[RMDB]
RNA sequence: GGGAACGACUCGAGUAGAGUCGAAAAUUCGAAGAGGAGAUUUGAUACUGAUCCGGUACCGCCUUGCCAUGUUUUGACUCGGAGGCCGUUAUCGGAAUCGCGAAUCACGGUGUUUCUCACUGUUAUGUUUGAAACGCAGGCUUGUGAAUUGUGCACAAUUUAAAUCGCAUUUCGAUGCGAUUUAAAUAAAAGAAACAACAACAACAAC
Reactivity to 2A3 in 0.01 (KOAc 150mM, MgCl2 10mM, bicine 150mM(pH8.5), 24C), signal-to-noise 4, nucleotides 027 to 156: u120u070c030g010a020a020g020a040g050g050a080g010a100u080u080u050g110a090u150a150c080u110g010a030u010c000c000g000g000u000a010c010c030g000c010c010u040u080g140c020c020a090u130g090u080u180u100u230g110a070c030u020c130g040g000a010g020g000c050c030g040u060u030a010u030c000g000g000a060a040u000c010g000c020g020a010a030u070c020a020c110g030g010u000g000u010u030u000c060u020c010a010c020u020g160u300u150a130u270g040u040u070u070g030a060a020a000c010g000c020a010g090g000c070u080u100g010u010g070a110a140u120u040g020u070g060c050a010c020a060
Reactivity to DMS in 0.01 (KOAc 150mM, MgCl2 10mM, bicine 150mM(pH8.5), 24C), signal-to-noise 2, nucleotides 027 to 156: u000u000c030g010a120a110g020a140g000g010a150g020a070u000u000u010g010a110u000a070c070u000g010a300u000c110c010g000g040u000a030c030c040g000c010c000u000u000g020c010c030a040u010g020u000u000u000u000g010a040c030u000c120g020g000a050g030g030c070c060g020u000u010a050u000c000g000g000a040a040u000c030g000c040g000a060a030u000c000a130c060g050g040u000g010u000u010u000c040u000c070a060c030u010g040u000u020a070u000g020u000u000u010g020a040a050a040c020g000c000a080g010g010c040u000u010g010u000g000a060a150u020u010g040u000g000c080a090c090a130